About this RNA
An RNA of 177 nucleotides, treated with DMS and read out base by base. For DMS, 880 sequencing reads were counted. The RNA was probed in 150 mM KOAc, 10 mM MgCl2 and 150 mM bicine (pH 8.5) at 24 C. It was measured as part of the RMDB library OK2TRN.
RNA sequence: GGGAACGACUCGAGUAGAGUCGAAAAAUUAAAACAGAUGUAGCUGUAAGCAUACCAGAGGGCUAUGUCGGACUAUUAACUAGCCGUAGUGGUGUAAGUAGUAAAACGCAUUUAGUGAUUGAAACAGUCCAUGCUCACAAUUCGUUGUGAGCAUGGAAAAAGAAACAACAACAACAAC
Reactivity to DMS in 0.01 (KOAc 150mM, MgCl2 10mM, bicine 150mM(pH8.5), 24C), signal-to-noise 1, nucleotides 027 to 126: a030u000u000a050a050a070a150c150a030g000a110u000g000u000a060g020c020u000g020u000a050a090g010c150a040u010a100c060c040a070g020a150g000g000g050c050u000a020u000g040u000c010g020g020a100c080u000a030u000u000a050a030c100u030a060g020c020c000g000u000a100g020u000g010g000u000g010u000a050a080g010u000a080g010u000a080a080a050a070c080g000c040a040u010u010u010a070g010u000g010a080u000u010g000a140a040a140c140a130g000